[RMDB]
Source: RMDB library OK2TRN, as collected in RNAgym. The record gives the reactivity of an RNA of 177 nucleotides to DMS and 2A3. For 2A3, 84,819 sequencing reads were counted.
RNA sequence: GGGAACGACUCGAGUAGAGUCGAAAAUCUGUUUACAAGUAAUCGUUAAGUCCAUGUCUGACAACGGUUGCGGAAACAGAAGUCAGUUGGCGUCAAGUCCGACAUGGACUAUUGGUAGAACUGAUCACUACUGCAUUGUAUUCGUACAGUGCAGUAGAAAAGAAACAACAACAACAAC
Reactivity to DMS in 0.01 (KOAc 150mM, MgCl2 10mM, bicine 150mM(pH8.5), 24C), signal-to-noise 9, nucleotides 027 to 126: u000c020u000g010u000u000u000a080c100a100a130g010u000a050a040u000c040g010u000u000a100a080g010u000c000c060a060u000g000u000c080u000g010a020c020a070a060c040g010g010u000u000g010c030g000g000a040a030a030c050a070g000a080a140g010u000c020a030g010u000u000g010g010c030g000u000c070a080a100g000u000c000c050g010a080c130a050u010g000g000a010c000u000a040u000u000g010g000u000a110g010a040a030c020u000g000a050u000c170a200
Reactivity to 2A3 in 0.01 (KOAc 150mM, MgCl2 10mM, bicine 150mM(pH8.5), 24C), signal-to-noise 9, nucleotides 027 to 126: u010c010u010g040u040u060u090a120c070a120a040g020u030a070a040u030c030g020u030u110a130a020g010u000c020c020a080u110g050u000c070u060g020a010c020a030a010c050g130g120u030u040g010c020g030g030a020a030a010c040a040g060a090a010g050u010c010a010g000u010u040g080g070c020g010u020c040a070a040g000u000c010c000g030a110c110a140u130g000g000a000c010u020a050u060u050g020g000u020a030g010a070a010c010u010g010a030u060c030a000